Structure probing data (DMS and 2A3) for a 177-nucleotide construct. Conditions: 150 mM KOAc, 10 mM MgCl2 and 150 mM bicine (pH 8.5), 24 C. Values cover nucleotides 27 to 126.
RNA sequence: GGGAACGACUCGAGUAGAGUCGAAAAGAAAAAGAAAAACUAGAGGAAGAAGAUAGUAGAACUGUGAAUCUACGUGUACGAUUUGCAGUGAAUACUAUGAGUACACGGAAAUAAACUCUAGGAAAAAGGCUAAGUAAUACUUCGGUAUUACUUAGCCAAAAGAAACAACAACAACAAC
Reactivity to DMS in 0.01 (KOAc 150mM, MgCl2 10mM, bicine 150mM(pH8.5), 24C), signal-to-noise 3, nucleotides 027 to 126: g020a040a100a140a100a050g000a120a090a120a110a080c010u000a020g010a010g000g000a100a140g000a220a100g000a040u000a000g000u000a000g000a180a020c000u000g020u000g010a000a000u000c010u020a110c180g010u030g010u020a020c230g020a010u000u000u030g000c000a000g000u000g020a100a070u000a010c000u000a000u000g000a080g000u010a040c120a050c130g010g000a050a090a070u010a070a080a120c000u000c000u000a010g000g000a040a080a040a100a130
Reactivity to 2A3 in 0.01 (KOAc 150mM, MgCl2 10mM, bicine 150mM(pH8.5), 24C), signal-to-noise 2, nucleotides 027 to 126: g050a000a040a020a010a000g260a020a090a000a000a000c000u000a000g030a050g070g030a050a090g030a060a000g020a100u010a000g000u000a000g010a120a000c000u020g000u000g010a050a000u010c030u040a100c110g280u250g040u110a030c110g000a000u000u000u000g000c000a000g000u000g080a140a080u000a000c000u030a000u020g080a040g070u110a030c090a030c140g140g050a090a090a000u120a110a100a000c000u000c000u010a010g060g000a100a020a030a030a000